[RMDB]
RNA sequence: GGGAACGACUCGAGUAGAGUCGAAAAGCGGGCCAAGGAGAUGACGCCCGCCGAGGUGCUCUGCAGCGAAUCGCAGGAGCGGAUGUGCGCGGUGGUCUCCCCGAAGAACGUCGACGCAUUCCUGGCGACUAGCCGAUUACUUCGGUAAUCGGCUAGUAAAAGAAACAACAACAACAAC
Reactivity to 2A3 in 0.01 (KOAc 150mM, MgCl2 10mM, bicine 150mM(pH8.5), 24C), signal-to-noise 1, nucleotides 027 to 126: g030c000g000g030g050c000c030a060a050g080g020a090g050a030u110g060a060c030g010c000c010c010g000c000c010g050a040g010g130u120g020c010u020c000u020g000c020a090g000c060g220a130a070u210c070g000c050a040g020g070a040g000c040g070g030a130u160g090u050g010c010g000c040g000g010u000g060g020u010c020u020c000c030c000c030g000a090a040g000a080a020c030g030u020c040g040a060c000g010c030a000u020u020c000c000u050g100g080c020g060
Reactivity to DMS in 0.01 (KOAc 150mM, MgCl2 10mM, bicine 150mM(pH8.5), 24C), signal-to-noise 2, nucleotides 027 to 126: g000c010g020g000g020c010c100a100a270g010g020a070g020a100u000g010a220c180g010c020c000c010g040c010c030g000a060g020g060u000g010c020u000c030u000g000c060a050g000c100g010a060a080u000c070g020c000a130g010g000a060g020c040g000g020a100u030g020u000g010c060g010c030g000g010u020g020g010u010c000u010c010c020c020c030g010a080a030g000a040a020c060g000u010c020g020a140c020g020c010a060u000u000c000c010u020g000g000c050g000
This 177-nucleotide RNA was probed chemically with 2A3 and DMS. Conditions: 150 mM KOAc, 10 mM MgCl2 and 150 mM bicine (pH 8.5), 24 C. 2A3 adducts were read by reverse transcription with SuperScript II with manganese.